[RMDB]
RNA sequence: GGGAACGACUCGAGUAGAGUCGAAAACGCUGGGAGUGUAAGUUCCCAGUAGGGAGCUGAAGCGCGCACGGCGAAGAACUACUGUGCGAAUAUCACUCCUGUGCUGAAGCGCGCACGGCAACCGAAAGGUGCGAUAAAUCUCAAUUCGUUGAGAUAACUUUGCCUCUUUAUUCGUAAAGAGGCAAAGAAAAGAAACAACAACAACAAC
Reactivity to 2A3 in 0.01 (KOAc 150mM, MgCl2 10mM, bicine 150mM(pH8.5), 24C), signal-to-noise 4, nucleotides 027 to 156: c030g000c020u030g010g010g000a040g010u000g020u070a300a300g050u040u020c010c000c000a010g000u000a000g000g010g000a010g000c020u060g040a270a040g030c000g000c000g000c020a020c010g020g000c000g060a100a030g010a020a010c010u010a000c000u020g030u120g140c160g120a020a010u060a030u060c000a000c000u010c000c000u000g030u010g000c010u050g020a140a060g000c010g000c000g000c000a000c010g010g000c030a030a030c000c010g020a080a030a030g000g000u010g000c000g010a020u110a120a200a050u020c010u000c010a040a140u160u100c200g080u100u010g010a010g010a050u060a060a040
Reactivity to DMS in 0.01 (KOAc 150mM, MgCl2 10mM, bicine 150mM(pH8.5), 24C), signal-to-noise 2, nucleotides 027 to 156: c050g010c030u010g010g000g020a040g020u000g020u010a050a190g000u000u000c000c000c000a090g010u000a020g020g020g010a030g070c000u020g020a120a080g000c050g030c010g020c000a300c030g010g010c000g000a100a140g000a140a200c020u010a020c010u000g020u010g020c070g020a090a070u000a120u000c020a030c010u000c010c000u030g030u000g040c030u000g000a110a040g010c030g030c000g010c010a300c030g030g040c030a110a120c000c010g000a080a150a170g010g010u000g000c020g000a140u000a100a130a090u000c000u000c000a010a080u000u010c190g040u000u000g020a020g010a010u000a060a120

This 207-nucleotide RNA was probed chemically with 2A3 and DMS. DMS adducts were read by reverse transcription with MarathonRT. For 2A3, 5,503 sequencing reads were counted. Conditions: 150 mM KOAc, 10 mM MgCl2 and 150 mM bicine (pH 8.5), 24 C. Source: RMDB library RNAMAK, as collected in RNAgym. Values cover nucleotides 27 to 156. 2A3 adducts were read by reverse transcription with SuperScript II with manganese.